[RMDB]
RNA sequence: GGGAACGACUCGAGUAGAGUCGAAAAUUGACCAAUACUUUGCUAAAAUAGGCCCUGUUAUAUUAUGAAUGAAACUAAACACUGCGCCUGGUACUGCUGCAAUUGGAUUAAAAUGCAAUGCUGCUAAGUGGAGUGUUAAGUUCGCUUAACACUCCACAAAAGAAACAACAACAACAAC
Reactivity to DMS in 0.01 (KOAc 150mM, MgCl2 10mM, bicine 150mM(pH8.5), 24C), signal-to-noise 1, nucleotides 027 to 126: u020u000g000a200c060c010a090a030u010a110c090u000u000u000g030c060u000a040a060a090a140u000a030g010g000c000c010c050u000g030u010u000a170u010a080u000u010a100u010g010a080a130u010g000a100a030a080c060u000a020a060a040c030a020c040u030g040c060g010c050c010u000g000g000u000a050c080u000g000c030u000g010c030a030a080u000u000g040g000a220u000u010a050a040a050a060u010g000c030a030a180u010g010c100u010g010c030u010a030a120
Reactivity to 2A3 in 0.01 (KOAc 150mM, MgCl2 10mM, bicine 150mM(pH8.5), 24C), signal-to-noise 1, nucleotides 027 to 126: u050u120g060a020c000c000a060a090u080a060c060u130u100u210g040c010u090a030a100a100a090u130a070g000g010c000c000c040u010g000u070u080a240u060a080u140u100a100u150g040a150a040u080g040a070a040a060c040u090a030a050a010c030a000c070u060g030c030g010c120c030u010g000g060u090a100c030u040g110c020u020g020c050a070a120u070u050g000g000a000u070u100a050a230a040a000u000g030c010a020a080u110g000c030u020g030c000u060a190a040
An RNA of 177 nucleotides, treated with DMS and 2A3 and read out base by base. Conditions: 150 mM KOAc, 10 mM MgCl2 and 150 mM bicine (pH 8.5), 24 C. For 2A3, 642 sequencing reads were counted. Reactivities are given for positions 27 through 126. The DMS profile rests on 819 reads. It was measured as part of the RMDB library OK2TRN.